[RMDB]
RNA sequence: GGGAACGACUCGAGUAGAGUCGAAAAUAACGCAACAUCUGUAAAGUGCAUUAAAGCCAAGGUAUGCCUGUAAUGUGAAAUAGUGUCAAGCGCAUAAAUCUGUGUGUGUUACUACUAAAUUAGGUAAUCCAUUUUGGGAGGAAGGUAGAAAAUCAAGGAAAUAGACAUAGUUCGCUAUGUCUAUUUCAAAAGAAACAACAACAACAAC
Reactivity to 2A3 in 0.01 (KOAc 150mM, MgCl2 10mM, bicine 150mM(pH8.5), 24C), signal-to-noise 7, nucleotides 027 to 156: u080a020a020c040g030c040a030a060c010a090u030c020u050g090u170a110a080a070g040u080g050c010a030u070u150a150a060a010g020c010c020a010a020g040g000u060a040u090g020c010c010u050g050u140a100a140u100g020u040g160a060a030a070u070a030g030u040g060u110c050a040a040g020c010g000c030a010u070a110a150a090u080c100u060g020u000g010u010g010u000g040u110u040a010c030u010a010c000u040a050a080a150u110u050a030g050g000u020a040a020u020c010c010a040u100u120u090u130g060g000g000a030g030g000a020a020g020g020u050a020g050a050a070a010a020u140c040a050a000g130
Reactivity to DMS in 0.01 (KOAc 150mM, MgCl2 10mM, bicine 150mM(pH8.5), 24C), signal-to-noise 4, nucleotides 027 to 156: u010a060a090c050g030c040a080a050c050a060u000c030u000g010u000a090a080a110g030u000g010c020a100u000u000a040a090a090g010c010c000a100a120g040g020u010a050u000g030c040c020u010g020u010a030a080u010g030u000g010a080a080a110u000a060g010u000g000u000c040a040a090g020c050g020c020a060u000a060a060a100u000c120u000g020u000g010u010g020u000g000u000u000a030c030u000a100c040u000a030a060a100u000u000a040g020g010u000a080a110u000c030c010a140u000u000u000u000g030g000g000a080g020g020a050a030g030g000u000a070g000a060a070a080a100u000c090a060a170g000
An RNA of 207 nucleotides, treated with 2A3 and DMS and read out base by base. The reactions ran in a buffer of 150 mM KOAc, 10 mM MgCl2 and 150 mM bicine (pH 8.5), at 24 C. Reactivities are rounded to 0.1 and cut off at 0 and 3.